The record gives the reactivity of an RNA of 207 nucleotides to DMS and 2A3. For 2A3 the reverse transcriptase was SuperScript II with manganese.
RNA sequence: GGGAACGACUCGAGUAGAGUCGAAAACGGUAUUGGUCAAGGCUAUACCGACAGCGCACCUUGAAAAGGGCGCUUAAUCCCCGGCCAAGCGCCGAAAUAUGAAUAGACACCGCUGGGCUGGUAGGGCAAAACAUGGCGAUCUUCGGAUCGCCAUGAAGAGAAUAUUGAUCUUCGGAUCAAUAUUCUCAAAAGAAACAACAACAACAAC
Reactivity to DMS in 0.01 (KOAc 150mM, MgCl2 10mM, bicine 150mM(pH8.5), 24C), signal-to-noise 2, nucleotides 027 to 156: c040g010g000u000a000u000u020g080g000u000c050a140a150g040g000c030u000a080u000a030c050c010g030a150c120a060g030c050g040c020a070c030c020u000u000g010a090a130a150a110g000g000g010c020g030c010u020u000a040a130u000c010c010c000c010g050g000c000c030a080a030g020c050g010c030c040g000a040a080a100u000a150u010g000a160a150u010a110g020a180c040a120c100c040g020c040u000g020g010g010c030u020g000g000u000a080g010g010g040c070a080a040a120a170c020a000u010g010g000c010g000a080u000c010u000u000c300g030g010a010u000c010g000c010c000a000u000g000a010a120
Reactivity to 2A3 in 0.01 (KOAc 150mM, MgCl2 10mM, bicine 150mM(pH8.5), 24C), signal-to-noise 3, nucleotides 027 to 156: c020g010g010u030a040u060u170g030g010u080c070a090a060g110g000c000u010a000u010a010c010c010g000a050c070a010g000c040g000c040a270c110c040u020u080g060a110a090a070a000g000g000g020c000g000c000u000u000a010a010u000c000c010c000c010g010g010c000c010a070a030g010c040g020c100c040g030a030a080a000u210a040u100g090a050a100u090a100g090a050c040a000c030c020g030c030u030g000g000g040c020u020g030g080u070a070g030g010g060c030a010a050a100a050c000a010u000g000g000c010g000a000u000c020u030u040c130g070g000a000u000c000g010c000c000a010u010g000a000a000
Reactivities are given for positions 27 through 156. The 2A3 profile rests on 2,321 reads. As a SHAPE reagent, 2A3 marks flexible, mostly unpaired nucleotides at the ribose 2'-OH.